This 207-nucleotide RNA was probed chemically with 2A3 and DMS. For 2A3 the reverse transcriptase was SuperScript II with manganese. For 2A3, 1,381 sequencing reads were counted. The reactions ran in a buffer of 150 mM KOAc, 10 mM MgCl2 and 150 mM bicine (pH 8.5), at 24 C. The DMS profile rests on 2,252 reads.
[RMDB]
RNA sequence: GGGAACGACUCGAGUAGAGUCGAAAAAAUAGGGGCAAAGGACUUGAAUAGACAUUUCUCCAAAGAAGGUGUACAAAUGGCCAAUAAGCAUAUGGAAAGAUGUUCAACUUCAUUAGCCACUGGGGAGAUCCAAGUCAAAACCACAAUGAGGUACGAAGACUAGUAUAGCUUUCGAGCUAUACUAGUCAAAAGAAACAACAACAACAAC
Reactivity to 2A3 in 0.01 (KOAc 150mM, MgCl2 10mM, bicine 150mM(pH8.5), 24C), signal-to-noise 3, nucleotides 027 to 156: a010a030u200a030g000g010g010g030c040a080a030a040g090g000a010c000u030u040g070a080a050u130a120g040a010c010a040u060u060u030c050u020c010c050a100a050a000g030a030a010g040g000u030g000u030a010c040a010a030a120u090g070g000c030c040a030a070u180a090a030g050c050a050u090a100u160g010g070a050a040a020g160a050u020g010u050u090c020a020a010c020u020u010c030a070u030u190a050g070c070c030a040c100u030g020g000g010g000a000g000a010u000c050c020a010a010g020u040c020a020a000a020a100c010c030a040c010a060a120u180g030a050g070g000u030a020c070g070a140a040
Reactivity to DMS in 0.01 (KOAc 150mM, MgCl2 10mM, bicine 150mM(pH8.5), 24C), signal-to-noise 1, nucleotides 027 to 156: a100a110u000a030g000g040g000g010c020a100a060a140g020g000a000c010u000u020g020a080a050u000a060g020a040c010a140u000u010u000c000u000c030c090a050a150a110g010a080a070g000g030u010g020u000a130c070a040a090a060u010g000g020c030c020a010a050u000a000a000g000c080a060u000a160u000g020g010a100a080a090g000a130u000g000u010u000c030a040a050c050u010u000c160a050u000u000a060g000c010c060a060c050u010g020g040g000g000a140g020a080u010c020c010a040a060g030u000c040a050a070a100a080c040c020a060c050a040a130u000g000a070g000g010u000a060c000g010a140a170